[RMDB]
RNA sequence: GGGAACGACUCGAGUAGAGUCGAAAAUCCACGUCCUUCGGGACGUGGAAAAUACGGCACGGCAGCCGAAGAAAUCCCGAAGCGCAGUGCAGCGCAGCACAAAAAGGUGAGUCUUCGGACUCACCAACAAUACUAACCGGUUCGCCGGUUAGUAUUGAAAAGAAACAACAACAACAAC
Reactivity to 2A3 in 0.01 (KOAc 150mM, MgCl2 10mM, bicine 150mM(pH8.5), 24C), signal-to-noise 5, nucleotides 027 to 126: u000c000c000a000c010g010u000c010c010u030u100c230g080g000g000a000c000g010u000g000g000a000a000a010a000u090a010c000g000g010c020a010c080g130g000c060a050g010c020c030g010a020a020g030a010a070a010u020c010c000c000g010a090a040g030c040g000c090a050g060u110g140c060a100g000c040g010c040a010g040c050a050c060a100a080a020a020a000g000g020u000g000a000g000u010c020u040u120c240g070g000a000c000u000c000a000c000c000a000a000
Reactivity to DMS in 0.01 (KOAc 150mM, MgCl2 10mM, bicine 150mM(pH8.5), 24C), signal-to-noise 6, nucleotides 027 to 126: u000c000c000a000c000g000u010c000c000u000u010c200g020g010g010a010c000g030u000g000g000a000a000a070a070u010a090c040g000g010c010a040c130g010g010c060a110g010c000c010g010a070a070g000a080a140a120u000c000c000c000g010a100a060g020c050g020c040a110g010u010g020c140a100g000c020g010c010a090g020c040a040c130a060a060a060a110a090g010g020u000g000a010g000u000c000u000u010c170g010g010a010c000u000c000a000c000c000a020a020